[RMDB]
RNA sequence: GGGAACGACUCGAGUAGAGUCGAAAAGUAUGGAUGCCACCGUGACGGCUCAAUCACACAAGUGCCAACGAUAACGAGGCGCUCUCUAUUGCUGCGUAACUGACGGCCUGACGGUCUGACGUUACAAAAAACGAAAAGUGGUUCGCCACUUUUCGAAGAUAGGAUAAAAGUUCGCUUUUAUCCUAUCAAAAGAAACAACAACAACAAC
Reactivity to DMS in 0.01 (KOAc 150mM, MgCl2 10mM, bicine 150mM(pH8.5), 24C), signal-to-noise 3, nucleotides 027 to 156: g040u000a090u010g030g010a090u010g020c020c020a080c040c070g000u000g000a130c060g000g030c040u000c050a090a100u000c080a050c080a090c060a060a120g040u010g000c060c020a060a160c070g010a080u020a080a180c040g000a150g010g000c020g020c020u010c020u000c040u000a070u000u000g040c020u010g000c030g030u010a060a050c020u000g040a300c300g010g030c000c010u000g020a060c290g040g040u000c010u000g000a300c300g010u000u030a030c020a010a020a030a060a080a140c000g010a000a010a020a020g030u000g010g010u000u030c300g010c020c000a010c020u000u000u010u000c000g020a010a060
Reactivity to 2A3 in 0.01 (KOAc 150mM, MgCl2 10mM, bicine 150mM(pH8.5), 24C), signal-to-noise 9, nucleotides 027 to 156: g100u080a060u160g050g060a060u110g040c030c020a070c050c050g050u060g070a060c070g000g010c030u030c060a060a120u110c030a020c020a020c020a170a080g030u020g040c020c010a100a060c080g090a120u100a190a060c050g010a060g020g000c010g010c010u010c010u010c010u060a110u120u230g070c080u080g030c040g030u000a000a010c010u020g020a010c020g000g010c000c010u150g120a070c130g000g010u000c010u010g010a010c010g000u000u010a010c010a010a020a000a000a000a000c010g000a010a000a000a000g000u000g020g010u030u060c140g050c040c000a000c000u000u000u000u000c000g000a010a010